[RMDB]
RNA sequence: GGGAACGACUCGAGUAGAGUCGAAAAGAUAUGGACGUUCCAGGGAGCUCCAUGGUCGGAAACGACCAUGAGAGCUUUGAUCUGGGAACGUCCUAAGUCAAAACGCCAAUGUCUUCGGACAUUGGCGCAUCAUUCGUGAGUUCGCUCACGAAUGAUGAAAAGAAACAACAACAACAAC
Reactivity to DMS in 0.01 (KOAc 150mM, MgCl2 10mM, bicine 150mM(pH8.5), 24C), signal-to-noise 3, nucleotides 027 to 126: g000a010u000a020u010g000g000a010c000g020u000u000c000c000a020g000g000g020a010g030c000u000c000c000a010u000g000g010u000c000g020g010a010a020a030c000g010a010c000c000a000u010g000a110g020a010g020c010u010u000u010g000a000u010c000u010g010g000g010a020a020c000g020u000c000c000u000a010a060g000u000c010a120a090a120a300c020g010c000c000a010a010u000g000u000c000u010u010c240g040g000a010c000a010u000u010g000g010c010g010
Reactivity to 2A3 in 0.01 (KOAc 150mM, MgCl2 10mM, bicine 150mM(pH8.5), 24C), signal-to-noise 1, nucleotides 027 to 126: g010a000u010a010u050g000g010a000c010g010u000u020c010c000a010g000g000g000a010g000c000u010c010c010a010u010g010g000u000c010g020g000a040a000a020c010g000a000c010c030a010u020g020a050g000a010g020c010u010u070u010g000a000u000c000u000g000g020g100a020a040c010g000u000c000c000u000a000a000g000u000c010a010a030a080a150c030g000c000c000a000a010u000g010u000c010u060u140c300g150g000a010c000a010u010u010g010g000c010g000

An RNA of 177 nucleotides, treated with DMS and 2A3 and read out base by base. Values cover nucleotides 27 to 126. The reactions ran in a buffer of 150 mM KOAc, 10 mM MgCl2 and 150 mM bicine (pH 8.5), at 24 C. For DMS the reverse transcriptase was MarathonRT.